[RMDB]
RNA sequence: GGGAACGACUCGAGUAGAGUCGAAAAGCGUACUACCUAGCUUUUGACGAAGGUAGUGUUGAGUUUCUCCCAAAUAGGAGAAACAAUGAUGCAUUUCCUUCGAUAAGCUAGGUAUCGCAAACGAUACGUCACGUUCUUCGGAACGUGACGUAUCGAACCUAAUCCAGUUGUUCGCAACUGGAUUAGGAAAAGAAACAACAACAACAAC
Reactivity to 2A3 in 0.01 (KOAc 150mM, MgCl2 10mM, bicine 150mM(pH8.5), 24C), signal-to-noise 5, nucleotides 027 to 156: g010c010g040u090a070c040u000a000c010c000u000a000g010c020u100u090u100u160g180a120c040g000a000a000g000g010u040a010g020u010g000u010u040g010a040g000u010u010u000c020u080c000c000c050a140a240a080u300a110g000g000a000g020a010a010a010c020a020a160u160g080a030u110g020c000a010u030u050u050c000c000u030u000c010g030a050u020a080a000g010c000u000a000g000g000u020a000u020c010g000c010a020a120a010c010g000a000u000a000c000g000u010c000a010c000g000u000u000c000u020u070c290g100g000a000a000c000g000u010g010a000c000g000u000a000u000c000g000a000a000
Reactivity to DMS in 0.01 (KOAc 150mM, MgCl2 10mM, bicine 150mM(pH8.5), 24C), signal-to-noise 2, nucleotides 027 to 156: g020c020g050u000a060c110u000a020c000c000u010a030g020c010u000u000u010u000g020a280c210g010a020a020g000g010u000a020g050u000g030u000u010g010a060g040u000u000u010c000u020c000c000c020a100a170a240u000a050g010g000a020g020a010a010a000c000a050a010u020g010a050u010g010c020a040u010u010u010c000c000u000u000c010g010a200u000a030a020g010c010u000a020g020g000u000a000u000c000g000c000a080a060a200c030g010a020u000a010c010g010u000c000a020c000g030u000u000c000u000u000c300g050g020a010a000c000g010u000g000a000c010g000u000a000u000c000g010a030a080
An RNA of 207 nucleotides, treated with 2A3 and DMS and read out base by base. Values cover nucleotides 27 to 156. The reactions ran in a buffer of 150 mM KOAc, 10 mM MgCl2 and 150 mM bicine (pH 8.5), at 24 C. For 2A3, 6,575 sequencing reads were counted. The DMS profile rests on 6,070 reads.